Structure probing data (DMS and 2A3) for a 177-nucleotide construct.
[RMDB]
RNA sequence: GGGAACGACUCGAGUAGAGUCGAAAACCGUUUUCGUCAGCCACUCGCAGAGCAGAGCAAAUUAAGCUAACAGCCGAGCAGCAAACGCUGUUCUCCGUACGGCAGAACUCCAGCCCGUAUGAUCGGCAUGAUUUGCUAUGUUCGCAUAGCAAAUCAUAAAAGAAACAACAACAACAAC
Reactivity to DMS in 0.01 (KOAc 150mM, MgCl2 10mM, bicine 150mM(pH8.5), 24C), signal-to-noise 6, nucleotides 027 to 126: c020c010g000u020u010u020u010c060g000u010c040a100g030c060c070a090c050u020c040g000c070a060g010a090g010c040a050g010a070g000c070a040a070a160u040u040a080a110g000c030u000a070a100c130a110g030c010c020g010a050g010c040a040g010c030a070a070a110c230g010c010u000g000u010u000c040u010c090c010g000u000a030c030g000g020c080a100g020a080a070c080u010c060c060a110g010c070c030c020g000u000a030u010g020a120u000c030g000g010c080
Reactivity to 2A3 in 0.01 (KOAc 150mM, MgCl2 10mM, bicine 150mM(pH8.5), 24C), signal-to-noise 6, nucleotides 027 to 126: c010c000g010u070u020u030u060c050g020u030c030a020g010c010c000a060c020u030c030g020c020a020g010a030g020c020a010g020a010g040c020a020a080a120u160u090a180a030g040c040u030a060a050c010a050g000c010c010g020a010g000c000a000g000c020a140a140a120c130g000c020u000g010u030u030c050u000c010c010g030u030a030c010g000g000c010a030g040a090a030c040u040c070c030a010g020c020c000c000g020u040a040u050g080a100u050c010g010g000c020
It was measured as part of the RMDB libraries RFM100 and RFMREP. The RNA was probed in 150 mM KOAc, 10 mM MgCl2 and 150 mM bicine (pH 8.5) at 24 C. High DMS reactivity at an A or C suggests that its Watson-Crick edge is free. For 2A3 the reverse transcriptase was SuperScript II with manganese.